[RMDB]
Source: RMDB libraries RFM100 and RFMREP, as collected in RNAgym.
This 177-nucleotide RNA was probed chemically with DMS and 2A3.
For 2A3, 1,984 sequencing reads were counted.
The RNA was probed in 150 mM KOAc, 10 mM MgCl2 and 150 mM bicine (pH 8.5) at 24 C.
RNA sequence: GGGAACGACUCGAGUAGAGUCGAAAAGAAAGAAAGCCCUUAGACUGCUUUAGCAGCGCAUCAUGGUUUGUAAUGAUGUGGAAAAAAGGUGCAAACCAUAAUUUGCUGCUUUAGAAUUUUAAGGAAAUUGAGUCUAUUGUUUCGACAAUAGACUCAAAAAAGAAACAACAACAACAAC
Reactivity to DMS in 0.01 (KOAc 150mM, MgCl2 10mM, bicine 150mM(pH8.5), 24C), signal-to-noise 3, nucleotides 027 to 126: g010a100a120a140g010a140a120a130g000c190c000c000u000u000a000g000a010c010u000g000c000u000u010u000a020g000c010a000g010c000g010c230a020u020c050a010u000g010g020u000u000u010g000u000a030a040u000g010a100u010g000u030g020g020a000a030a080a070a130a160g010g000u010g000c010a000a010a010c000c000a000u000a040a030u010u010u010g000c000u000g000c000u000u000u000a010g000a030a010u000u000u000u000a020a010g000g010a040a070a160
Reactivity to 2A3 in 0.01 (KOAc 150mM, MgCl2 10mM, bicine 150mM(pH8.5), 24C), signal-to-noise 2, nucleotides 027 to 126: g060a010a110a000g060a040a070a020g110c000c000c000u010u000a010g000a070c040u030g010c020u050u010u010a000g000c000a000g000c010g020c020a010u030c010a010u000g010g030u010u020u000g050u050a150a050u080g110a120u130g060u300g210g000a020a100a010a000a020a060g090g000u030g000c000a020a000a000c000c000a010u030a010a030u070u010u070g000c000u000g000c000u000u020u000a000g010a010a000u010u020u010u020a010a000g010g020a050a040a060